[RMDB]
RNA sequence: GGGAACGACUCGAGUAGAGUCGAAAAGCUGUAUGUCCGUCCUCAGAUUUCCUCACAUUUCCCUCUUAUAUUCAUGCUAUUUGAUAUUAAGAACAGUACGUAAGAAGGGAAAAUUUUCUCUGAGAUCUCAUACCCGAAAAUUCGUUUUCGGGUAUGAAAAAGAAACAACAACAACAAC
Reactivity to 2A3 in 0.01 (KOAc 150mM, MgCl2 10mM, bicine 150mM(pH8.5), 24C), signal-to-noise 2, nucleotides 027 to 126: g000c070u060g000u210a110u090g100u040c010c010g060u060c020c000u010c010a040g010a080u000u050u020c010c000u090c010a080c030a140u030u000u010c010c000c000u010c000u000u030a020u010a060u040u140c060a080u070g010c030u060a100u140u060u100g070a100u090a120u300u210a150a020g010a020a000c000a010g030u060a020c030g000u020a030a020g070a040a090g110g000g000a000a000a010a060u080u050u040u020c050u000c020u040g090a090g080a180u040c030
Reactivity to DMS in 0.01 (KOAc 150mM, MgCl2 10mM, bicine 150mM(pH8.5), 24C), signal-to-noise 4, nucleotides 027 to 126: g000c050u000g020u000a040u000g010u010c030c020g010u000c080c030u020c030a050g000a090u000u000u000c010c010u000c150a100c200a170u000u000u000c010c000c000u000c010u000u000a010u000a150u010u010c100a170u000g010c030u010a090u000u000u010g000a140u010a110u010u010a060a160g000a050a090c030a010g010u010a030c150g010u010a010a000g010a080a060g010g000g000a000a010a050a110u010u000u020u010c100u000c050u010g010a090g000a110u000c070
Conditions: 150 mM KOAc, 10 mM MgCl2 and 150 mM bicine (pH 8.5), 24 C.
Structure probing data (2A3 and DMS) for a 177-nucleotide construct.
Source: RMDB library OK2TST, as collected in RNAgym.
2A3 adducts were read by reverse transcription with SuperScript II with manganese.
The 2A3 profile rests on 1,502 reads.
DMS adducts were read by reverse transcription with MarathonRT.